[RMDB]
Notes
Source: RMDB library OK1LIB, as collected in RNAgym. Structure probing data (DMS and 2A3) for a 177-nucleotide construct. For 2A3, 1,086 sequencing reads were counted. Conditions: 150 mM KOAc, 10 mM MgCl2 and 150 mM bicine (pH 8.5), 24 C. The DMS profile rests on 1,667 reads.

RNA sequence: GGGAACGACUCGAGUAGAGUCGAAAAAGGCCGUUUUUAUUGGAUAUACUCAUUUUGUAACGUUUCUCUUGACACCGUUGGAGUCGAGCACCGCCAUAUAAAGACGUUCGCCUCUGUGCUGCAGGGCUAUCCGAUGGUGUUUCGACACCAUCGGAUAAAAAGAAACAACAACAACAAC
Reactivity to DMS in 0.01 (KOAc 150mM, MgCl2 10mM, bicine 150mM(pH8.5), 24C), signal-to-noise 1, nucleotides 027 to 126: a080g000g000c010c000g000u010u000u000u000u000a010u000u000g020g000a090u060a050u020a040c020u070c110a210u030u060u050u030g010u000a050a090c020g000u000u000u000c020u000c070u000u000g010a110c150a070c030c030g000u000u020g010g000a030g010u010c010g000a040g080c080a030c030c030g000c030c000a160u000a020u010a040a010a000g020a040c080g040u000u010c090g000c010c000u050c080u000g020u010g020c080u000g010c050a130g000g000g030c080
Reactivity to 2A3 in 0.01 (KOAc 150mM, MgCl2 10mM, bicine 150mM(pH8.5), 24C), signal-to-noise 3, nucleotides 027 to 126: a010g060g030c010c020g040u000u000u000u040u140a180u030u120g030g010a020u050a070u080a190c030u090c120a140u080u100u160u120g220u090a050a040c060g020u000u070u000c000u000c000u050u150g070a070c020a040c120c080g100u060u050g040g000a020g010u070c030g010a030g040c050a060c020c040g020c000c000a110u110a020u000a160a090a000g070a010c020g000u000u050c010g100c000c000u060c000u050g030u030g080c050u040g040c010a040g010g000g000c020